[RMDB]
RNA sequence: GGGAACGACUCGAGUAGAGUCGAAAAACAGUGUCACAACUGGCGUUCAUAGAGAAGGUUAGCAACCGCGCUCCCGCGAGUGCCGCUGCGGCUCGAAUGCAAAAUGUUUUACCGGCGCCGGUCGGGCACACAACCACGGAUUCGUCCGUGGUUGUGUAAAAGAAACAACAACAACAAC
Reactivity to DMS in 0.01 (KOAc 150mM, MgCl2 10mM, bicine 150mM(pH8.5), 24C), signal-to-noise 3, nucleotides 027 to 126: a130c100a090g000u010g000u000c010a070c020a060a020c020u000g010g000c000g000u000u020c060a120u050a140g040a150g020a120a000g000g020u000u000a100g020c050a120a090c110c140g000c120g000c020u010c090c150c140g010c120g020a080g090u030g000c060c080g000c060u000g000c150g010g030c040u000c030g000a190a070u030g000c120a040a000a140a060u030g010u030u070u040u000a150c130c110g000g000c000g000c030c000g010g030u010c040g010g000g010c070
Reactivity to 2A3 in 0.01 (KOAc 150mM, MgCl2 10mM, bicine 150mM(pH8.5), 24C), signal-to-noise 3, nucleotides 027 to 126: a000c010a050g040u040g040u090c020a070c010a250a050c050u000g020g000c000g020u020u080c110a090u130a160g060a010g080a140a090g020g040u070u080a030g010c040a060a060c020c000g030c010g010c060u100c000c050c010g090c040g020a050g070u060g040c050c000g000c050u070g030c010g030g000c040u060c100g000a120a050u090g010c020a060a060a050a010u140g080u010u090u080u110a100c030c050g020g000c010g000c000c030g010g000u010c010g000g000g020c000